[RMDB]
RNA sequence: GGGAACGACUCGAGUAGAGUCGAAAACUUUGGUGUGGGUAAGGCGUUUCAGAUUGUGGGCGUUGGCUCGCGCGCUGCAUUUGCUGCUGGCAACACGGGGCGUGGCUUCCUGUUGGCUGGUGCAGAAGGUGCGGCGGGUAACUUGCUGACCACCUCCCUUGGUAGUGGUUUUCGAACCACUACCAAGAAAAGAAACAACAACAACAAC
Reactivity to 2A3 in 0.01 (KOAc 150mM, MgCl2 10mM, bicine 150mM(pH8.5), 24C), signal-to-noise 2, nucleotides 027 to 156: c010u060u000u190g060g000u110g040u060g080g020g000u120a070a030g070g000c060g020u040u120u070c090a110g030a240u180u170g050u080g060g020g020c030g040u040u040g090g010c040u020c040g010c020g000c000g020c010u000g000c050a110u000u040u160g020c000u010g030c020u040g060g000c000a010a010c000a030c180g010g000g010g000c110g110u160g090g000c040u240u220c160c050u020g020u010u040g160g070c010u040g070g150u130g010c000a010g020a090a010g100g030u010g030c060g030g080c000g010g000g000u030a060a010c030u030u130g000c020u000g000a030c010c010a050c000c010u040c010c000

Notes:
Conditions: 150 mM KOAc, 10 mM MgCl2 and 150 mM bicine (pH 8.5), 24 C. Structure probing data (2A3) for a 207-nucleotide construct.